[RMDB]
RNA sequence: GGGAACGACUCGAGUAGAGUCGAAAAGUAUGACGGUGGUCAUACCCCACCUGCCAGGGUGGGAGGGUCGGCCAACCAGUAUUAGACCUGAUGCUACGUUGGUAAGUAGCAUCAACCACGCCUAUAGCGCACUUAGGCUAUAGAGCGACUACUGGAACUAUGAUCUCAUGUUCGCAUGAGAUCAUAGAAAAGAAACAACAACAACAAC
Reactivity to 2A3 in 0.01 (KOAc 150mM, MgCl2 10mM, bicine 150mM(pH8.5), 24C), signal-to-noise 4, nucleotides 027 to 156: g020u010a000u040g010a010c030g070g240u300g090g010u020c020a010u010a020c000c010c010c000a010c000c000u110g090c060c070a070g030g000g040u020g000g000g000a090g010g000g010u050c020g040g140c060c010a060a090c010c010a010g010u020a040u070u140a030g060a060c020c050u010g000a000u010g000c010u000a010c000g100u160u080g130g110u160a230a120g000u000a010g000c010a000u000c000a020a010c020c030a060c010g000c000c000u000a010u010a010g020c090g040c090a070c230u210u300a110g070g040c000u000a000u010a010g050a020g000c000g000a010c030u030a010c000u010g000g010a040a030
Reactivity to DMS in 0.01 (KOAc 150mM, MgCl2 10mM, bicine 150mM(pH8.5), 24C), signal-to-noise 1, nucleotides 027 to 156: g010u000a030u010g000a050c040g030g050u000g030g010u000c000a040u000a030c030c020c020c040a050c010c000u000g050c140c150a280g010g040g080u010g040g000g010a040g010g030g000u010c030g020g010c010c060a070a140c010c050a040g000u000a000u010u000a080g010a070c080c050u000g000a060u000g000c000u000a010c110g030u000u000g050g020u010a070a200g050u000a010g010c010a010u000c010a010a030c030c050a270c000g010c000c000u000a000u000a010g000c000g000c110a130c220u010u000a100g040g030c010u000a010u010a050g000a150g020c040g010a110c090u000a060c010u010g030g010a150a300
Chemical mapping of a 207-nucleotide RNA with 2A3 and DMS. The reactions ran in a buffer of 150 mM KOAc, 10 mM MgCl2 and 150 mM bicine (pH 8.5), at 24 C. 2A3 adducts were read by reverse transcription with SuperScript II with manganese. In probing experiments dimethyl sulfate is read out at A N1 and C N3, which are open when not base-paired.